[RMDB]
RNA sequence: GGGAACGACUCGAGUAGAGUCGAAAACUGAAGUGUGACGUGAGGAGCUUCAAUCCGCAUACUGUUUCCAAACUACACUUGUGAACCAUGACAUUGCUUUGCUUCCAAGACAUUUAAAAUUUCAGAGUAUUGGAACACAGGCAUAUACUCUACAAACCCUUGUUGCUACAUUCGUGUAGCAACAAGGAAAAGAAACAACAACAACAAC
Reactivity to 2A3 in 0.01 (KOAc 150mM, MgCl2 10mM, bicine 150mM(pH8.5), 24C), signal-to-noise 4, nucleotides 027 to 156: c040u070g030a020a020g020u000g010u030g100a090c090g020u030g010a040g000g010a020g060c020u120u100c050a010a120u090c050c020g040c060a060u100a150c040u060g050u010u140u020c010c000a060a050a040c030u110a020c020a010c010u040u020g070u070g070a060a050c040c020a120u140g050a050c030a140u080u060g050c010u090u040u040g020c000u020u000c000c010a020a010g060a040c040a090u170u260u300a100a180a140a100u170u260u160c100a040g020a020g050u030a070u030u020g010g020a040a000c050a000c010a030g020g000c000a000u040a000u000a050c010u030c030u060a060c040a050a090a090c010
Reactivity to DMS in 0.01 (KOAc 150mM, MgCl2 10mM, bicine 150mM(pH8.5), 24C), signal-to-noise 2, nucleotides 027 to 156: c080u000g020a060a040g030u010g010u000g000a090c110g040u000g020a130g040g010a210g010c070u000u000c060a050a110u010c040c010g010c060a070u000a060c030u010g000u020u000u010c060c130a100a070a100c030u000a080c050a040c010u000u000g000u000g010a060a100c050c010a090u000g000a130c040a080u000u000g010c020u010u000u000g010c030u000u000c030c000a060a110g010a110c110a110u000u010u020a050a070a090a300u000u000u020c050a160g020a030g000u000a050u000u000g010g000a100a130c080a110c050a000g000g010c080a110u000a040u000a000c010u010c020u010a140c050a080a110a150c070
Background
This 207-nucleotide RNA was probed chemically with 2A3 and DMS. For 2A3, 2,811 sequencing reads were counted. For 2A3 the reverse transcriptase was SuperScript II with manganese. For DMS the reverse transcriptase was MarathonRT. Conditions: 150 mM KOAc, 10 mM MgCl2 and 150 mM bicine (pH 8.5), 24 C.